[RMDB]
Chemical mapping of a 177-nucleotide RNA with DMS and 2A3. For DMS, 840 sequencing reads were counted.

RNA sequence: GGGAACGACUCGAGUAGAGUCGAAAAGGAUCCUCUCACAGGAUUGUCGCUGUGUUCCGAAACUCCAACAGUAUUGCUUCGGGACACCUACAGCAAUACUGUAGGUAUAGUGAGUAGGAGAGGAUCGCUCACCGUCGAUGUUCGCAUCGACGGUGAGAAAAGAAACAACAACAACAAC
Reactivity to DMS in 0.01 (KOAc 150mM, MgCl2 10mM, bicine 150mM(pH8.5), 24C), signal-to-noise 2, nucleotides 027 to 126: g020g010a000u000c020c000u000c000u010c000a140c060a100g030g000a140u000u020g000u000c090g060c050u050g000u000g000u000u030c000c020g000a080a100a070c060u020c090c100a000a060c090a030g050u000a130u000u000g010c060u000u010c300g000g000g020a030c300a020c000c010u010a030c140a000g020c020a030a060u010a300c000u000g000u000a020g000g020u000a050u010a050g020u000g020a120g000u000a110g000g000a120g020a000g040g010a000u000c000g000
Reactivity to 2A3 in 0.01 (KOAc 150mM, MgCl2 10mM, bicine 150mM(pH8.5), 24C), signal-to-noise 1, nucleotides 027 to 126: g040g010a000u000c010c000u010c000u000c010a030c030a050g140g130a200u200u240g150u070c010g000c080u000g000u000g000u130u040c000c000g030a030a010a010c050u100c030c060a100a090c020a030g070u060a110u040u070g000c000u010u060c020g020g010g030a020c050a080c000c000u010a000c050a030g070c000a020a050u110a140c000u000g000u010a020g070g000u060a060u030a150g070u090g040a010g050u040a020g020g060a010g000a000g000g000a000u010c000g000